[RMDB]
RNA sequence: GGGAACGACUCGAGUAGAGUCGAAAACGUCGUGAACUAGCGACAAUGCCGUAGAUCUAUCGUUAUCUAACCGAAACAUCGUGACUAGUCGUAGAAUAGAACCAGGAGGGGCCGCUGGCAAACAAAGUCGGGGUCUCAGAUUCGUCUGAGGCCCCGAAAAAGAAACAACAACAACAAC
Reactivity to DMS in 0.01 (KOAc 150mM, MgCl2 10mM, bicine 150mM(pH8.5), 24C), signal-to-noise 1, nucleotides 027 to 126: c100g000u000c000g010u000g050a080a040c060u010a110g060c080g000a000c050a050a120u010g000c030c060g000u000a080g000a060u000c030u000a090u030c030g000u010u020a110u000c100u020a020a080c040c000g000a300a150a050c150a040u180c000g000u000g000a010c020u000a040g000u030c000g030u000a030g000a080a110u000a060g000a060a080c000c110a040g030g000a040g010g000g000g010c000c020g030c000u010g050g000c100a000a040a030c100a070a110a010g000
Reactivity to 2A3 in 0.01 (KOAc 150mM, MgCl2 10mM, bicine 150mM(pH8.5), 24C), signal-to-noise 1, nucleotides 027 to 126: c040g050u050c000g000u000g060a090a120c120u030a000g010c010g010a010c020a000a020u110g000c030c050g000u000a020g000a070u000c000u030a090u040c000g010u060u000a010u120c010u040a020a000c030c010g050a040a080a000c000a050u070c000g050u060g020a000c040u010a000g060u030c020g100u070a030g020a040a090u090a090g040a080a030c070c080a010g000g040a060g010g010g000g000c000c000g040c050u020g020g000c070a000a170a000c000a000a110a000g080
Notes: Source: RMDB library OK1LIB, as collected in RNAgym. Structure probing data (DMS and 2A3) for a 177-nucleotide construct. For 2A3, 576 sequencing reads were counted. Values are in units of 0.01, from 0 to 300, in steps of 10.